Source: RMDB library TTRINS, as collected in RNAgym. An RNA of 177 nucleotides, treated with DMS and read out base by base. Reactivities are given for positions 27 through 126. In probing experiments dimethyl sulfate is read out at A N1 and C N3, which are open when not base-paired. The RNA was probed in 150 mM KOAc, 10 mM MgCl2 and 150 mM bicine (pH 8.5) at 24 C.
RNA sequence: GGGAACGACUCGAGUAGAGUCGAAAAGAUAUGGAAGAUAGGCAAUCCAGCGUAGAGAGCGCGAAACGCUCGUGUCGGAAACGACACAAGCGGAGCUCCUACGCUGGAUUGCCUAUCUUCCUAAGUCCUCCUAAUUUACGUUCGCGUAAAUUAGGAGAAAAGAAACAACAACAACAAC
Reactivity to DMS in 0.01 (KOAc 150mM, MgCl2 10mM, bicine 150mM(pH8.5), 24C), signal-to-noise 1, nucleotides 027 to 126: g020a090u010a300u010g000g000a040a030g020a000u000a000g000g000c000a000a000u000c000c010a010g040c010g050u000a000g000a230g010a000g040c020g040c190g020a120a090a280c020g030c000u000c020g060u000g020u000c010g000g000a100a080a160c020g020a010c030a000c010a060a000g020c000g010g010a250g000c000u000c000c000u000a010c000g000c000u000g000g000a010u000u000g000c000c010u000a010u000c000u010u000c000c000u000a020a090g000u000c020